[RMDB]
This 177-nucleotide RNA was probed chemically with 2A3 and DMS. The RNA was probed in 150 mM KOAc, 10 mM MgCl2 and 150 mM bicine (pH 8.5) at 24 C. For DMS, 28,456 sequencing reads were counted. For 2A3 the reverse transcriptase was SuperScript II with manganese. For DMS the reverse transcriptase was MarathonRT.
RNA sequence: GGGAACGACUCGAGUAGAGUCGAAAAUGACUUGGGCGGUGGUGUCGGUGCGGCGACUUACGCUCUGGAUAGGUUGUCGAAUAUGCGUUCGGGUGCUUGUGUCGGAGGAGGUGAGAGCCCAUGGCGGCACCCUUCCAAAUUUCGAUUUGGAAGGGUGAAAAGAAACAACAACAACAAC
Reactivity to 2A3 in 0.01 (KOAc 150mM, MgCl2 10mM, bicine 150mM(pH8.5), 24C), signal-to-noise 6, nucleotides 027 to 126: u130g030a020c030u080u090g030g000g000c040g040g030u090g010g040u070g020u060c030g010g030u080g030c030g010g000c010g020a020c000u030u070a020c040g030c040u030c050u120g070g030a070u040a080g080g000u020u030g060u080c010g030a060a050u160a100u220g050c050g040u020u070c030g000g000g040u050g020c040u070u080g040u020g040u090c030g010g030a040g020g030a040g020g010u040g020a080g010a010g020c000c000c020a040u070g040g010c020g010g000
Reactivity to DMS in 0.01 (KOAc 150mM, MgCl2 10mM, bicine 150mM(pH8.5), 24C), signal-to-noise 7, nucleotides 027 to 126: u020g000a070c060u010u010g000g000g000c060g010g010u000g010g010u000g020u010c070g020g010u010g010c050g020g010c030g000a060c040u010u010a050c100g020c080u020c070u010g010g010a140u010a040g000g010u000u010g020u010c020g000a070a060u020a110u020g000c070g020u000u000c040g020g000g010u000g000c050u000u010g020u030g010u010c050g000g010a070g010g000a100g020g010u010g000a110g010a210g000c030c010c040a060u010g010g010c070g010g010